[RMDB]
RNA sequence: GGGAACGACUCGAGUAGAGUCGAAAAUGACUGUGCGGCUGGUGUUAUGCGUAUGGUAUCGAUUAGUCGGUCAGUAUUACGAUUAGUUAUGAUUGUAACUGUGUACGUACACAACUGACCAUACACGCGUAGUCGCAGUUGGUCAACUAUGCGCAUGGUGCAGGAUAGAUUUCGAUCUAUCCUGCACAAAAGAAACAACAACAACAAC
Reactivity to 2A3 in 0.01 (KOAc 150mM, MgCl2 10mM, bicine 150mM(pH8.5), 24C), signal-to-noise 5, nucleotides 027 to 156: u060g010a000c010u030g020u030g070c020g060g000c020u020g030g030u070g080u200u160a080u080g030c020g000u010a020u050g060g010u050a040u120c010g030a080u060u050a060g100u080c080g010g000u010c010a010g010u020a090u090u060a020c010g020a030u030u030a050g140u110u110a100u260g120a180u050u190g020u010a020a010c010u010g030u020g050u190a060c020g040u100a010c060a000c010a090a080c050u050g010a000c000c000a000u040a040c070a000c010g000c030g040u100a050g030u070c020g010c000a030g010u100u120g000g030u030c010a010a010c030u040a020u130g060c070g010c040a050u170g060
Reactivity to DMS in 0.01 (KOAc 150mM, MgCl2 10mM, bicine 150mM(pH8.5), 24C), signal-to-noise 2, nucleotides 027 to 156: u020g020a100c060u000g030u000g010c000g000g080c040u010g020g000u020g000u010u000a070u000g030c050g000u000a030u000g030g050u040a070u000c040g030a150u010u020a070g010u000c060g040g000u000c010a060g010u010a140u000u000a030c020g020a080u000u010a080g010u010u010a030u010g000a090u010u000g000u000a020a020c050u000g000u000g020u000a050c130g010u000a070c060a050c030a110a060c030u010g010a040c030c010a110u010a020c090a040c050g040c020g000u000a100g030u010c020g030c030a050g000u000u010g000g030u010c010a080a050c030u000a030u000g030c030g050c030a080u010g060